Chemical mapping of a 177-nucleotide RNA with DMS and 2A3. Reactivities are given for positions 27 through 126.
RNA sequence: GGGAACGACUCGAGUAGAGUCGAAAAAAUGGCAACUCUGCAGGCGAAGAACCAGUUGCAAUUAAUACAAAUUGGUUGGGUAAUAAGUCUGAUUCACCAUCUUCAUAUUCGACAGAAAUUGUGCCACGCCAAAGGAUGAUUUCGAUCAUCCUUUGGCAAAAGAAACAACAACAACAAC
Reactivity to DMS in 0.01 (KOAc 150mM, MgCl2 10mM, bicine 150mM(pH8.5), 24C), signal-to-noise 2, nucleotides 027 to 126: a070a050u000g020g010c010a050a070c220u000c080u020g000c080a110g000g010c020g000a090a040g010a100a110c000c000a040g000u000u000g010c030a100a030u000u000a130a080u030a060c190a040a030a070u000u000g000g020u010u000g000g000g000u000a060a060u010a080a150g000u020c040u010g010a110u000u010c120a070c040c020a080u000c020u000u000c030a100u000a140u000u010c090g000a090c110a090g010a040a060a000u010u000g000u000g000c000c050a020c190
Reactivity to 2A3 in 0.01 (KOAc 150mM, MgCl2 10mM, bicine 150mM(pH8.5), 24C), signal-to-noise 1, nucleotides 027 to 126: a000a000u150g010g030c010a040a030c050u010c010u110g000c000a020g000g000c040g040a080a030g030a080a050c000c000a040g040u040u040g100c000a010a010u090u050a110a050u150a100c060a080a120a050u020u010g040g000u090u000g120g000g050u050a050a050u020a090a040g010u030c000u030g050a090u030u030c020a000c090c020a020u040c010u040u020c020a010u000a070u280u070c080g050a030c020a050g100a060a110a020u160u030g080u030g040c020c000a020c020

The RNA was probed in 150 mM KOAc, 10 mM MgCl2 and 150 mM bicine (pH 8.5) at 24 C. For 2A3 the reverse transcriptase was SuperScript II with manganese. DMS adducts were read by reverse transcription with MarathonRT.